[RMDB]
RNA sequence: GGGAACGACUCGAGUAGAGUCGAAAAUUACUAGUCGCACUGAGGGGGAUUCGUGGCCGGCGUCGAUACGCCAAAGCCGGAUCAGUUCGAUCGCUGGCCCACUUGCGCUGGUCGGGCUGCUGGUCAUGCUCGUGGUGGUUCACGCGACGCACCCCAAAUCGUAAAAUGAUUUCGAUCAUUUUACGAUAAAAGAAACAACAACAACAAC
Reactivity to DMS in 0.01 (KOAc 150mM, MgCl2 10mM, bicine 150mM(pH8.5), 24C), signal-to-noise 1, nucleotides 027 to 156: u010u010a070c050u020a060g020u000c050g050c030a120c060u000g000a130g040g000g000g110g000a140u010u000c100g050u010g020g060c030c050g060g000c010g020u000c110g030a120u020a090c000g020c030c020a040a040a110g050c050c080g100g010a020u010c020a120g010u000u000c070g030a150u010c170g000c020u040g000g010c000c010c020a030c020u000u010g050c050g030c030u010g040g000u000c030g030g010g000c010u000g020c030u000g000g010u000c010a100u010g010c040u010c020g000u010g030g000u020g010g010u000u010c030a080c000g000c000g020a080c030g020c060a130c000c000c000c000a020a100
Reactivity to 2A3 in 0.01 (KOAc 150mM, MgCl2 10mM, bicine 150mM(pH8.5), 24C), signal-to-noise 2, nucleotides 027 to 156: u080u080a050c090u030a040g030u050c020g020c050a020c060u120g070a160g020g030g000g000g030a080u140u180c120g010u070g010g000c010c010g000g000c000g020u020c060g020a040u070a170c020g000c000c020a090a040a020g030c030c020g000g010a020u020c010a040g070u180u190c050g030a070u080c060g050c220u130g000g000c000c020c000a030c020u040u090g000c050g040c070u080g060g000u040c030g020g030g110c100u230g000c010u010g020g000u020c000a010u100g000c000u000c040g040u020g020g010u030g000g030u030u090c060a020c110g030c000g000a020c020g000c020a070c000c010c000c000a060a100